An RNA of 177 nucleotides, treated with DMS and read out base by base.
RNA sequence: GGGAACGACUCGAGUAGAGUCGAAAAGAUAUGGAUGUUCAGUAUUUCCAGUAAUCAGUAGGGUGCGGUAUCGGAAACGAUACUCGCAUGAAGCUACGAUUACUGGAAAUACUGAACAUCCUAAGUCCAACCGUAACAACUUCGGUUGUUACGGUUGAAAAGAAACAACAACAACAAC
Reactivity to DMS in 0.01 (KOAc 150mM, MgCl2 10mM, bicine 150mM(pH8.5), 24C), signal-to-noise 2, nucleotides 027 to 126: g000a100u000a300u010g000g000a020u000g010u000u000c010a020g000u000a010u010u000u000c000c000a000g000u010a010a000u000c000a110g050u000a000g030g020g010u010g010c010g010g020u000a000u000c000g000g010a170a100a300c000g010a010u000a000c020u040c000g020c010a010u000g020a180a210g020c000u000a010c000g000a040u000u000a000c000u000g000g000a020a000a000u000a000c010u000g000a000a010c020a000u010c000c000u010a020a100g010u000c030